[RMDB]
RNA sequence: GGGAACGACUCGAGUAGAGUCGAAAACGGAUUAUCGUAAUUGAUUGUCGGCGGCAGUGUGCCGGUCUGGAUCGUGAGCAGUGAGAAGACGGCCUCUAUAGCGCCGGCUGCCGUCAGCGUAUGGCCAUACUGGGCAUCAGUUCGCUGAUGCCCAGUAAAAAGAAACAACAACAACAAC
Reactivity to DMS in 0.01 (KOAc 150mM, MgCl2 10mM, bicine 150mM(pH8.5), 24C), signal-to-noise 2, nucleotides 027 to 126: c070g000g000a210u010u000a060u000c020g000u000a140a080u000u020g010a060u000u000g010u000c010g010g000c000g000g010c060a090g050u010g010u010g020c000c010g030g000u000c010u010g030g010a150u000c060g030u000g010a170g010c110a130g010u000g000a220g000a110a050g000a050c000g010g000c000c000u000c090u000a120u010a070g010c120g010c000c000g010g000c020u000g000c010c030g030u000c040a070g030c090g030u000a100u010g000g000c000c080a200
Reactivity to 2A3 in 0.01 (KOAc 150mM, MgCl2 10mM, bicine 150mM(pH8.5), 24C), signal-to-noise 1, nucleotides 027 to 126: c020g050g030a100u110u070a060u300c010g020u030a060a240u070u160g040a080u100u060g030u060c020g020g000c000g060g070c030a030g030u090g000u090g130c000c000g000g050u020c010u020g040g100a040u030c040g030u070g040a040g080c140a040g060u070g020a110g040a140a040g050a020c010g000g020c030c010u000c010u050a130u170a130g100c030g000c000c040g000g000c000u050g030c000c000g050u020c030a010g030c010g080u110a010u100g080g000c000c000a010
This 177-nucleotide RNA was probed chemically with DMS and 2A3. For 2A3 the reverse transcriptase was SuperScript II with manganese. Source: RMDB library OK2TST, as collected in RNAgym. For 2A3, 902 sequencing reads were counted. Reactivities are given for positions 27 through 126. The DMS profile rests on 1,477 reads. The reactions ran in a buffer of 150 mM KOAc, 10 mM MgCl2 and 150 mM bicine (pH 8.5), at 24 C.